The data come from the RNA Mapping Database (RMDB), library RFMREP. Chemical mapping of a 177-nucleotide RNA with DMS. For DMS the reverse transcriptase was MarathonRT. For DMS, 1,594 sequencing reads were counted.
[RMDB]
RNA sequence: GGGAACGACUCGAGUAGAGUCGAAAACAGGGUAGUGCCAUUACACUGUUAUUACUGAGUGUUUUUCUAGCGACUUGGCUGCUGGGCUAUGGCUUUGCCCUCUAACCAGCGGUCUUGGUCUUGCACACUCACAAAACGAGUUCGCUCGUUUUGUGAGAAAAGAAACAACAACAACAAC
Reactivity to DMS in 0.01 (KOAc 150mM, MgCl2 10mM, bicine 150mM(pH8.5), 24C), signal-to-noise 1, nucleotides 027 to 126: c030a020g010g010g070u000a020g010u000g020c120c190a110u010u000a030c020a040c030u000g000u000u000a080u010u010a120c150u000g000a080g010u020g000u000u000u000u000u000c070u010a100g010c070g000a010c020u010u000g000g000c000u000g000c010u000g010g000g010c120u000a000u000g000g010c010u000u010u020g010c000c000c000u010c010u010a000a010c010c020a000g000c000g000g010u000c000u010u020g000g020u000c030u000u000g040c050a090c130a110